RNA sequence: GGGAACGACUCGAGUAGAGUCGAAAACUCAAGGCCUUCGGGCCUUGAGAAAAGGCAUCGUAUCUUUGCUUCGAAGCCAAACAUGAAACAUGAAAGGAGAGAAAAGUUUUGGGUUCGCCCAAAACAACAACGUGUUCAACUUCGGUUGAACACGUUGAAAAGAAACAACAACAACAAC
Reactivity to 2A3 in 0.01 (KOAc 150mM, MgCl2 10mM, bicine 150mM(pH8.5), 24C), signal-to-noise 1, nucleotides 027 to 126: c060u010c020a020a010g000g010c040c050u130u180c280g080g000g010c000c020u010u010g000a010g000a010a010a010a010g000g000c000a040u000c000g060u090a070u070c130u020u100u130g080c010u040u010c010g060a040a030g000c010c000a100a100a000c080a090u200g090a090a100a060c070a060u130g060a110a140a000g090g020a080g020a000g000a080a000a040a120g000u000u000u000u000g000g050g000u020u040c210g080c040c000c030a010a000a010a000c010a000a010
Reactivity to DMS in 0.01 (KOAc 150mM, MgCl2 10mM, bicine 150mM(pH8.5), 24C), signal-to-noise 1, nucleotides 027 to 126: c030u000c000a010a000g020g010c000c000u000u000c300g000g000g000c000c010u000u030g020a030g000a030a050a110a140g020g000c000a060u030c030g030u000a070u020c140u000u010u000g000c100u000u000c080g000a020a110g000c010c000a110a120a130c050a030u000g000a120a100a120c190a130u000g000a050a050a060g000g010a040g030a030g000a120a070a090a100g000u000u000u000u000g010g010g020u010u020c250g010c000c000c030a000a000a030a010c000a130a190
Source: RMDB library M2PK50, as collected in RNAgym.
The record gives the reactivity of an RNA of 177 nucleotides to 2A3 and DMS.
The RNA was probed in 150 mM KOAc, 10 mM MgCl2 and 150 mM bicine (pH 8.5) at 24 C.
High DMS reactivity at an A or C suggests that its Watson-Crick edge is free.
The DMS profile rests on 683 reads.